[RMDB]
RNA sequence: GGGAACGACUCGAGUAGAGUCGAAAAGGUAACGAGUGGAAGAUCAGCAGUCUGCUUCCGGUGAUCUGACCCAAAAGUCCGUUGCCAACGGAGAGUCCACCGACACGGCAUCCGCAGCCACCGAGGGACACGGCUUUAUCUUCGGAUAAAGCCGUGUAAAAGAAACAACAACAACAAC
Reactivity to 2A3 in 0.01 (KOAc 150mM, MgCl2 10mM, bicine 150mM(pH8.5), 24C), signal-to-noise 2, nucleotides 027 to 126: g080g020u060a000a080c040g040a030g040u080g010g020a070a000g000a020u080c000a020g050c000a010g080u040c040u140g010c000u070u050c140c020g000g000u010g000a120u030c050u040g110a160c010c010c000a000a170a000a000g030u010c040c010g050u010u070g220c020c000a030a000c000g010g010a020g000a030g040u020c020c020a060c030c020g060a030c010a010c050g050g000c010a040u020c020c010g050c040a000g080c020c010a000c010c020g020a100g070g050g020
Reactivity to DMS in 0.01 (KOAc 150mM, MgCl2 10mM, bicine 150mM(pH8.5), 24C), signal-to-noise 2, nucleotides 027 to 126: g000g000u000a000a020c030g020a170g000u030g010g000a150a010g000a120u020c040a130g000c070a120g000u010c040u010g000c020u000u010c030c050g010g030u000g010a050u010c000u030g020a140c030c030c050a070a030a090a150g000u000c000c040g020u020u020g040c040c060a150a090c040g070g000a000g000a140g030u000c000c000a060c010c080g040a030c140a020c070g110g000c000a080u000c010c010g080c070a060g000c100c030a070c060c010g010a190g000g000g000